[RMDB]
Record summary:
Structure probing data (DMS and 2A3) for a 177-nucleotide construct.

RNA sequence: GGGAACGACUCGAGUAGAGUCGAAAAAUGGAAGUCUCCAAUAGUGGUAGAAAAAUUGGGCAAAGCCGAAGUCGAUGGCAACCUCGUCACCAUCAAACAUGUCGUCCUCGAAGGGGUUAAAGCUCAACCGACAACCCUUAUUCGUAAGGGUUGUCGGAAAAGAAACAACAACAACAAC
Reactivity to DMS in 0.01 (KOAc 150mM, MgCl2 10mM, bicine 150mM(pH8.5), 24C), signal-to-noise 1, nucleotides 027 to 126: a060u000g000g020a120a080g000u010c060u030c000c010a020a000u000a150g010u000g000g000u010a000g000a040a040a000a100a090u070u160g000g010g060c040a000a300a180g000c110c060g000a000a090g100u000c070g010a090u090g000g000c120a000a060c140c010u010c000g010u070c040a050c080c020a060u000c040a000a090a130c220a200u000g000u100c010g000u000c020c000u000c040g000a030a000g000g030g000g010u000u000a000a060a010g000c000u000c010a040a200
Reactivity to 2A3 in 0.01 (KOAc 150mM, MgCl2 10mM, bicine 150mM(pH8.5), 24C), signal-to-noise 2, nucleotides 027 to 126: a010u060g010g000a000a030g030u020c000u000c000c000a010a010u040a050g060u070g170g000u040a100g290a020a080a030a060a070u130u000g000g000g090c040a130a140a050g000c000c000g060a180a000g050u120c020g050a130u110g060g000c000a040a050c000c000u030c010g110u080c000a010c020c000a010u100c040a000a010a200c020a050u150g000u020c000g050u000c000c000u050c070g050a050a070g170g010g000g000u040u110a090a090a000g000c010u000c020a010a000

It was measured as part of the RMDB library OK1LIB. The reactions ran in a buffer of 150 mM KOAc, 10 mM MgCl2 and 150 mM bicine (pH 8.5), at 24 C.